This 177-nucleotide RNA was probed chemically with DMS and 2A3.
It was measured as part of the RMDB library TTRDES.
[RMDB]
RNA sequence: GGGAACGACUCGAGUAGAGUCGAAAAGAUAUGGAGUGGACAGGGAGCUGUGUGGUCGGAAACGACCACCAGCAUCGAUCUGUGCACUCCUAAGUCAAAAGCCUGAUUGCGUUCGCGCAAUCAGGCACAAAUGAAGUGUGUUCGCACACUUCAUUUGAAAAGAAACAACAACAACAAC
Reactivity to DMS in 0.01 (KOAc 150mM, MgCl2 10mM, bicine 150mM(pH8.5), 24C), signal-to-noise 7, nucleotides 027 to 126: g000a020u000a260u000g000g000a030g030u000g000g000a020c010a010g020g000g020a090g030c000u000g010u010g030u000g000g010u000c000g010g000a050a050a120c000g020a020c010c000a000c000c010a000g020c000a150u000c250g000a070u000c000u000g010u000g000c000a010c010u000c000c000u000a000a070g010u000c020a120a120a160a120g010c000c000u000g000a010u000u000g010c000g020u000u010c290g020c000g030c000a000a000u000c000a000g010g010c000a000
Reactivity to 2A3 in 0.01 (KOAc 150mM, MgCl2 10mM, bicine 150mM(pH8.5), 24C), signal-to-noise 5, nucleotides 027 to 126: g000a000u020a020u090g000g000a010g000u020g020g220a000c000a010g060g050g100a210g040c000u020g120u080g000u000g300g010u000c000g010g000a030a030a010c000g000a000c010c000a000c000c000a000g010c000a020u070c020g050a090u000c000u000g000u040g040c010a000c000u000c000c000u000a000a000g010u000c020a060a040a150a040g000c000c010u000g000a010u010u010g010c010g050u040u080c300g000c010g000c210a000a000u000c000a000g000g000c000a000